[RMDB]
RNA sequence: GGGAACGACUCGAGUAGAGUCGAAAAGAAAGGGACCCCUGCCAUGGGAGCGUCGGUCAGCACCCGACGCAUAUUUUUUUAUGCCGCUGACACCCCUCGACGCUGCAGGAGGGGUGGUCCCGAAAGAACUAGGGAUAGUAUUCGUACUAUCCCUAGUAAAAGAAACAACAACAACAAC
Reactivity to 2A3 in 0.01 (KOAc 150mM, MgCl2 10mM, bicine 150mM(pH8.5), 24C), signal-to-noise 4, nucleotides 027 to 126: g020a060a070a020g010g000g010a020c000c000c010c030u040g170c050c030a200u090g090g060g090a030g010c000g010u020c060g040g000u020c010a000g000c020a100c030c140c090g080a080c080g000c040a080u000a010u010u130u040u000u000u000u010a030u010g040c050c070g000c010u000g000a010c010a130c040c050c010c020u020c000g020a020c010g030c020u080g090c030a030g000g040a030g000g010g010g010u020g010g030u020c000c000c000g000a030a020a000g030a020
Reactivity to DMS in 0.01 (KOAc 150mM, MgCl2 10mM, bicine 150mM(pH8.5), 24C), signal-to-noise 9, nucleotides 027 to 126: g010a090a120a170g010g010g000a040c020c000c000c010u000g010c020c030a090u000g010g010g010a040g020c010g010u000c010g000g000u000c000a020g010c020a190c230c120c130g010a090c210g000c000a000u000a000u000u000u010u010u020u010u000a010u000g010c010c300g020c020u000g000a030c020a240c050c030c030c060u010c010g000a030c020g010c010u000g000c020a090g000g010a050g000g010g010g020u000g020g000u000c000c000c000g010a080a080a110g010a120
Structure probing data (2A3 and DMS) for a 177-nucleotide construct.
2A3 adducts were read by reverse transcription with SuperScript II with manganese.
Values are in units of 0.01, from 0 to 300, in steps of 10.
The reactions ran in a buffer of 150 mM KOAc, 10 mM MgCl2 and 150 mM bicine (pH 8.5), at 24 C.
DMS adducts were read by reverse transcription with MarathonRT.